[RMDB]
RNA sequence: GGGAACGACUCGAGUAGAGUCGAAAACAUCCACUGCUACGGCAGUGGAUGAACGAGGUAGGUACGCCUACCUCGAAAGGUGGAUGUGGCCAUAUACAUUAAACGUCCAUGGUACGCCAUGGACGAAAUUUACCCCUGAGUUCGCUCAGGGGUAAAUAAAAGAAACAACAACAACAAC
Reactivity to 2A3 in 0.01 (KOAc 150mM, MgCl2 10mM, bicine 150mM(pH8.5), 24C), signal-to-noise 1, nucleotides 027 to 126: c000a010u000c010c020a020c000u020g000c020u030a070c140g170g000c010a000g020u000g000g000a000u000g000a010a010c030g010a000g050g000u020a000g000g020u030a030c180g010c030c000u000a000c000c000u000c000g000a010a000a000g030g010u040g020g020a050u080g000u030g100g000c050c050a070u050a010u040a070c050a030u110u210a070a190a020c010g000u040c010c000a000u000g000g020u030a030c280g020c060c000a010u020g000g000a000c000g030a000a000
Reactivity to DMS in 0.01 (KOAc 150mM, MgCl2 10mM, bicine 150mM(pH8.5), 24C), signal-to-noise 2, nucleotides 027 to 126: c010a020u000c000c000a040c000u000g010c010u000a080c260g020g000c000a010g060u010g000g010a000u000g000a050a110c040g010a010g020g020u010a000g000g010u000a100c270g010c010c000u000a000c000c000u010c000g010a060a030a050g030g020u000g000g000a060u000g000u010g000g000c030c020a100u010a050u000a040c080a050u000u000a050a060a180c010g020u000c000c010a010u000g000g000u000a110c240g040c000c000a010u000g000g000a010c000g000a000a020